[RMDB]
RNA sequence: GGGAACGACUCGAGUAGAGUCGAAAACUCUCGCCAGUAGUGGCGAUUGCACGCCUCCUUCAGUAUAAUGUACGGACUGCCGGUCUUUAUAAUGGUGUUGAUGAUGGCGAACAUCAGGGACUUGGCCGAGACCUUGGAAGAGUACGCCCCUGCCGCCGUAUAGGGCUCAAUUCGUUGAGCCCUAUACAAAAGAAACAACAACAACAAC
Reactivity to DMS in 0.01 (KOAc 150mM, MgCl2 10mM, bicine 150mM(pH8.5), 24C), signal-to-noise 1, nucleotides 027 to 156: c050u000c010u000c020g040c000c000a070g010u000a080g020u010g000g030c000g010a090u020u000g020c020a100c030g000c050c000u000c060c000u010u020c030a100g020u000a060u000a060a090u000g020u000a050c060g000g000a090c060u000g010c030c050g010g010u010c020u000u000u000a080u000a110a100u000g000g010u000g030u010u000g010a060u010g020a120u000g050g030c020g040a070a070c010a040u000c000a050g030g000g000a070c000u000u000g040g000c030c050g030a120g000a030c070c010u000u010g010g000a090a080g020a130g030u000a050c050g040c060c000c000c010u000g020c080c040g000c120c060
Reactivity to 2A3 in 0.01 (KOAc 150mM, MgCl2 10mM, bicine 150mM(pH8.5), 24C), signal-to-noise 2, nucleotides 027 to 156: c010u030c000u000c010g020c100c020a100g030u160a060g070u220g050g000c020g030a010u010u130g040c120a080c110g020c030c000u080c010c020u080u100c080a040g040u100a090u040a120a180u120g050u120a020c020g010g070a050c010u040g070c020c020g030g030u010c020u000u100u050a150u070a150a080u070g000g050u000g020u050u070g030a150u050g000a030u070g050g050c030g030a020a020c010a040u100c020a010g000g000g020a030c040u150u270g050g000c000c010g040a040g020a070c000c020u040u120g070g020a060a010g030a040g020u030a010c060g010c000c000c000c020u010g000c020c000g050c010c000
Chemical mapping of a 207-nucleotide RNA with DMS and 2A3. The DMS profile rests on 3,366 reads. 2A3 adducts were read by reverse transcription with SuperScript II with manganese. Reactivities are given for positions 27 through 156. Values are in units of 0.01, from 0 to 300, in steps of 10.